The record gives the reactivity of an RNA of 177 nucleotides to DMS and 2A3.
RNA sequence: GGGAACGACUCGAGUAGAGUCGAAAAUUCAACGGUUUGGACGAGCCGACUCGCUUCGCCUGCUACCCCGUGUCGCACCCUCACGGUGCGUGGCGUUUCCUCUCGCCCCAAUUAUGCGCAGGCGCGCCGACCAUAGUAAGUUCGCUUACUAUGGUCGAAAAGAAACAACAACAACAAC
Reactivity to DMS in 0.01 (KOAc 150mM, MgCl2 10mM, bicine 150mM(pH8.5), 24C), signal-to-noise 9, nucleotides 027 to 126: u010u020c080a080a180c080g000g000u010u010u010g010g010a080c070g000a100g000c040c030g000a090c050u000c050g010c070u010u010c050g010c010c020u000g000c030u000a080c060c020c020c030g010u010g000u010c030g010c040a050c010c000c100u020c140a130c170g010g010u000g010c030g020u010g000g010c050g000u000u020u000c020c020u000c050u000c050g000c030c010c030c050a080a090u030u020a060u030g000c040g010c030a090g010g020c080g010c270g000c070
Reactivity to 2A3 in 0.01 (KOAc 150mM, MgCl2 10mM, bicine 150mM(pH8.5), 24C), signal-to-noise 9, nucleotides 027 to 126: u130u070c040a060a030c050g020g030u050u050u070g120g030a040c030g010a020g020c020c010g060a060c010u010c040g030c020u090u060c020g010c010c000u020g010c010u060a070c000c010c000c020g030u030g040u060c030g010c030a040c000c010c000u120c040a080c090g020g010u030g010c020g010u010g020g010c020g000u010u050u020c010c010u020c010u020c020g030c000c000c000c010a040a070u220u100a090u220g040c030g000c020a040g140g040c050g010c000g000c040
Annotation: The reactions ran in a buffer of 150 mM KOAc, 10 mM MgCl2 and 150 mM bicine (pH 8.5), at 24 C. For 2A3 the reverse transcriptase was SuperScript II with manganese. Reactivities are given for positions 27 through 126.